[RMDB]
RNA sequence: GGGAACGACUCGAGUAGAGUCGAAAAAUACCGAAUAGUGCCAUCAGAAUAGGAUGAAUAUAGUAAUUAGUUUCUGGUUUUCUAUAAAUAAAAGACAAAUCUUGUGAACUAGACAUAUCGGUAAAAUGCAUGGAUUGGAAUCGUGUAGUCGACAGAACGACAUGCUAACAUUCGUGUUAGCAUGUCGAAAAGAAACAACAACAACAAC
Reactivity to 2A3 in 0.01 (KOAc 150mM, MgCl2 10mM, bicine 150mM(pH8.5), 24C), signal-to-noise 1, nucleotides 027 to 156: a000u040a010c000c010g030a050a030u060a040g050u020g000c000c000a000u010c010a080g160a190a060u140a140g060g000a070u050g020a010a020u180a050u090a160g090u040a050a140u100u000a000g000u020u030u000c010u000g000g020u030u050u030u000c030u020a050u200a120a140a140u300a080a110a030a000g010a030c080a000a180a020u000c000u050u050g090u090g060a010a000c010u010a020g050a000c000a030u050a060u060c040g000g000u040a020a020a070a000u100g030c000a020u000g050g050a060u110u080g070g060a070a020u030c030g030u020g000u030a050g010u040c030g000a010c020a060g090a050a010
Structure probing data (2A3) for a 207-nucleotide construct. For 2A3 the reverse transcriptase was SuperScript II with manganese. Values cover nucleotides 27 to 156. The RNA was probed in 150 mM KOAc, 10 mM MgCl2 and 150 mM bicine (pH 8.5) at 24 C.